RNA sequence: GGGAACGACUCGAGUAGAGUCGAAAAAGGACCCCUUCGACGAACAGAAGACCCUGGACCGGGAGGGAAUAGCCCAUAGUACAAGGGGAGAUGCUAGGAGUCGGGAGAGGUCAGAACGACUGGGAAAUGCGAUGGUUCUUCGGAACCAUCAAAAGAAACAACAACAACAAC
Reactivity to DMS in 0.01 (KOAc 150mM, MgCl2 10mM, bicine 150mM(pH8.5), 24C), signal-to-noise 6, nucleotides 027 to 129: a000g040g000a120c050c000c000c010u000u020c060g010a010c090g050a140a060c040a030g020a040a030g000a150c130c050c010u000g050g020a050c150c150g020g000g040a000g000g000g000a060a030u060a140g080c000c010c000a080u010a100g000u060a080c040a060a060g010g000g000g010a070g020a070u050g020c090u030a080g010g030a090g030u030c000g000g000g000a020g010a020g040g030u040c000a060g030a070a060c080g050a040c070u040g030g020g000a080a050a070u090g000c190
Reactivity to 2A3 in 0.01 (KOAc 150mM, MgCl2 10mM, bicine 150mM(pH8.5), 24C), signal-to-noise 7, nucleotides 027 to 129: a000g090g040a070c000c000c010c000u030u060c010g060a060c080g030a090a010c020a070g030a040a020g090a090c020c010c020u070g000g000a040c020c020g010g010g000a030g020g020g000a040a050u120a040g020c030c000c000a050u100a050g090u130a070c040a080a060g010g010g040g000a040g020a030u130g040c010u030a030g020g040a050g040u040c020g000g010g000a030g010a010g010g000u020c010a010g030a040a010c070g060a020c040u070g020g000g050a020a080a060u150g040c060
Structure probing data (DMS and 2A3) for a 170-nucleotide construct. As a SHAPE reagent, 2A3 marks flexible, mostly unpaired nucleotides at the ribose 2'-OH. The 2A3 profile rests on 15,621 reads. For DMS, 24,863 sequencing reads were counted.